[RMDB]
RNA sequence: GGGAACGACUCGAGUAGAGUCGAAAAUCCUAAGUCGUUUGACCCACAGGGAGCUCGCUGAACUAUCGGAAACGAUAGAUACGAAUAAGAGCUUUGAUCUGUGGGAUCAAACGAUAUGGAAAACUGUGUAAUCGAGUUUCGACUCGAUUACACAGAACGAGUAACACGCGUUCGCGCGUGUUACUCGAAAAGAAACAACAACAACAAC
Reactivity to 2A3 in 0.01 (KOAc 150mM, MgCl2 10mM, bicine 150mM(pH8.5), 24C), signal-to-noise 1, nucleotides 027 to 156: u030c060c010u030a100a020g000u030c000g000u000u000u000g000a010c000c030c000a030c020a020g000g050g000a000g000c000u000c000g100c210u210g040a040a110c000u000a000u000c000g050g070a110a030a080c020g000a010u000a030g000a030u220a040c070g020a150a030u170a300a100g000a000g000c000u190u120u060g060a060u000c000u030g000u010g010g000g000a010u000c000a000a000a000c000g000a000u010a040u010g030g000a080a200a000a110c000u020g010u000g010u010a000a000u000c020g000a000g000u000u100u080c100g140a090c030u000c000g000a010u000u000a000c000a000c010a000g010a000a040
Chemical mapping of a 207-nucleotide RNA with 2A3. It was measured as part of the RMDB library RNAMAK. The 2A3 profile rests on 678 reads. 2A3 adducts were read by reverse transcription with SuperScript II with manganese. The RNA was probed in 150 mM KOAc, 10 mM MgCl2 and 150 mM bicine (pH 8.5) at 24 C. Values cover nucleotides 27 to 156. Values are in units of 0.01, from 0 to 300, in steps of 10.